[RMDB]
RNA sequence: GGGAACGACUCGAGUAGAGUCGAAAAAACCUUCUCAUGGUGGUAGCUCCAGUAAAGGAAUAGGUAGGAGACCUAGGAUAGGUGGAGAUCUCCUGUAGGGUAGGCAGUGGCAGAUUAGGGAAGGGAGCGUCCUUUCACAUUUCGAUGUGAAAGGACGAAAAGAAACAACAACAACAAC
Reactivity to DMS in 0.01 (KOAc 150mM, MgCl2 10mM, bicine 150mM(pH8.5), 24C), signal-to-noise 1, nucleotides 027 to 126: a070a070c020c030u000u010c040u020c040a140u000g000g010u000g000g000u000a070g010c090u000c010c020a110g020u020a030a080a060g020g010a120a110u010a050g020g000u020a100g000g000a080g010a140c020c010u000a080g010g000a100u000a030g000g010u000g000g000a090g000a090u000c020u000c000c010u000g020u020a080g030g010g010u000a040g010g000c090a030g010u010g000g020c160a100g000a110u020u000a110g000g000g010a080a040g000g020g010a120g010
Reactivity to 2A3 in 0.01 (KOAc 150mM, MgCl2 10mM, bicine 150mM(pH8.5), 24C), signal-to-noise 1, nucleotides 027 to 126: a000a000c040c000u030u000c080u020c000a070u090g000g030u020g040g030u010a030g010c000u030c020c030a080g090u260a050a130a050g070g020a050a100u090a110g120g070u070a050g020g150a060g080a040c000c010u010a030g160g080a080u060a150g140g040u050g080g040a110g030a030u020c030u020c000c010u000g060u080a060g020g020g010u040a110g030g000c050a010g010u080g040g000c000a000g010a060u070u120a050g000g010g000a020a030g020g010g000a010g040
This 177-nucleotide RNA was probed chemically with DMS and 2A3. For DMS the reverse transcriptase was MarathonRT. The RNA was probed in 150 mM KOAc, 10 mM MgCl2 and 150 mM bicine (pH 8.5) at 24 C. It was measured as part of the RMDB library OK2TRN. The DMS profile rests on 1,262 reads.